[RMDB]
RNA sequence: GGGAACGACUCGAGUAGAGUCGAAAAGUUAUGCUCUCGCUGCCUAAUGGCGGUGCGGGAAACCCACUCUAAAGUCCUUAGGGUUAGCCCCUUAAGGCGGGAUUCGGAGGCACCUGGCAACAGAAGCUGAAACUGUGCACAUUCGUGUGCACAGUAAUUACAGUCUUCAUUUCGAUGAAGACUGUAAAAAAGAAACAACAACAACAAC
Reactivity to DMS in 0.01 (KOAc 150mM, MgCl2 10mM, bicine 150mM(pH8.5), 24C), signal-to-noise 2, nucleotides 027 to 156: g000u010u010a070u000g020c040u000c030u000c020g030c000u010g060c000c000u000a170a140u000g030g020c070g030g030u000g000c030g000g010g010a080a050a080c000c000c020a130c090u000c080u010a040a050a120g010u000c040c030u000u000a080g000g010g000u000u000a200g000c240c250c000c020u000u000a050a050g020g020c070g010g000g020a130u000u000c080g010g000a130g030g010c050a060c030c030u000g000g010c070a040a130c050a010g000a090a100g020c000u000g010a170a060a060c000u000g000u010g020c000a010c010a100u010u010c240g040u000g020u000g000c000a010c010a000g000u010a000a040
Reactivity to 2A3 in 0.01 (KOAc 150mM, MgCl2 10mM, bicine 150mM(pH8.5), 24C), signal-to-noise 3, nucleotides 027 to 156: g050u100u080a100u190g010c000u000c000u000c030g000c010u030g020c000c030u300a300a170u240g070g000c050g030g030u030g000c010g040g030g020a060a090a070c000c020c030a060c030u130c060u150a180a140a050g130u050c000c000u000u010a000g010g000g010u010u100a040g010c000c010c000c010u010u030a010a000g000g000c030g000g000g000a100u100u110c070g070g010a040g040g010c010a050c010c050u010g000g000c000a050a000c010a090g080a110a030g010c030u040g000a070a070a000c000u010g000u000g030c010a000c000a020u040u100c200g110u020g000u010g000c000a000c000a000g000u000a000a010

The record gives the reactivity of an RNA of 207 nucleotides to DMS and 2A3. Conditions: 150 mM KOAc, 10 mM MgCl2 and 150 mM bicine (pH 8.5), 24 C. The DMS profile rests on 3,478 reads. The data come from the RNA Mapping Database (RMDB), library M2RFPK. 2A3 adducts were read by reverse transcription with SuperScript II with manganese.